[RMDB]
RNA sequence: GGGAACGACUCGAGUAGAGUCGAAAAACCAUCGCCAACGGCACGUUAUUCAUCGCAUCCGACCCGGCAUCGCUGGAGUCGGCGGCGGGUAUCACUGGCGUUCCGCGAUUCGUUGGUAGCCAGGUGGGAUUGUACGGAGUUUCGACUCCGUACAAUCAAAAGAAACAACAACAACAAC
Reactivity to 2A3 in 0.01 (KOAc 150mM, MgCl2 10mM, bicine 150mM(pH8.5), 24C), signal-to-noise 3, nucleotides 027 to 126: a000c020c000a010u020c020g010c000c020a020a000c010g060g020c040a020c120g040u040u030a070u050u090c170a230u110c100g000c000a020u000c000c000g000a020c000c010c000g020g000c010a250u230c170g000c010u020g000g040a220g040u030c010g000g000c020g010g000c000g030g000g010u040a030u030c040a020c080u040g110g010c040g040u130u020c030c020g020c020g080a110u140u080c080g040u050u050g030g020u020a050g070c020c030a040g020g080u080g070g060
Reactivity to DMS in 0.01 (KOAc 150mM, MgCl2 10mM, bicine 150mM(pH8.5), 24C), signal-to-noise 3, nucleotides 027 to 126: a120c010c010a060u000c030g010c020c090a060a020c010g000g010c100a060c110g010u000u010a070u000u010c040a070u010c030g010c020a050u000c030c000g010a030c000c000c000g000g000c010a140u010c260g020c000u000g000g000a120g020u000c010g020g000c090g000g010c010g010g000g000u000a030u000c060a080c100u010g000g010c010g000u000u000c040c060g020c030g010a100u010u010c080g010u000u000g010g010u000a090g010c030c040a100g020g010u000g010g020
Source information:
Source: RMDB library OK2TST, as collected in RNAgym. Chemical mapping of a 177-nucleotide RNA with 2A3 and DMS. 2A3 adducts were read by reverse transcription with SuperScript II with manganese. The 2A3 profile rests on 3,837 reads. For DMS the reverse transcriptase was MarathonRT. For DMS, 5,887 sequencing reads were counted. The RNA was probed in 150 mM KOAc, 10 mM MgCl2 and 150 mM bicine (pH 8.5) at 24 C.